Description
An RNA of 177 nucleotides, treated with DMS and read out base by base. The DMS profile rests on 979 reads. Values cover nucleotides 27 to 126. High DMS reactivity at an A or C suggests that its Watson-Crick edge is free. It was measured as part of the RMDB library OK2TST.
RNA sequence: GGGAACGACUCGAGUAGAGUCGAAAACUUCAUUAUGAGUGCCAUAAAAAUGCACGAUAUCGCCAAUCUCGCCAUUGGCAAUGAUCUCGCGGGCUAACUGGCUAGUUGGGUUCUUCAUAUAGUUGAAAACUCAUAAGUCCUUCGGGACUUAUGAGUUAAAAGAAACAACAACAACAAC
Reactivity to DMS in 0.01 (KOAc 150mM, MgCl2 10mM, bicine 150mM(pH8.5), 24C), signal-to-noise 2, nucleotides 027 to 126: c040u000u000c100a140u000u000a080u010g000a160g020u000g020c010c110a130u000a010a050a130a090a140u000g020c010a020c000g030a050u000a080u000c040g000c010c010a020a010u010c040u000c300g000c170c130a120u000u000g000g010c010a080a060u000g000a050u000c070u000c080g000c130g020g000g000c020u000a060a020c190u000g000g030c030u000a080g020u020u010g020g000g030u000u010c020u020u000c020a050u000a070u010a060g010u010u010g020a060a110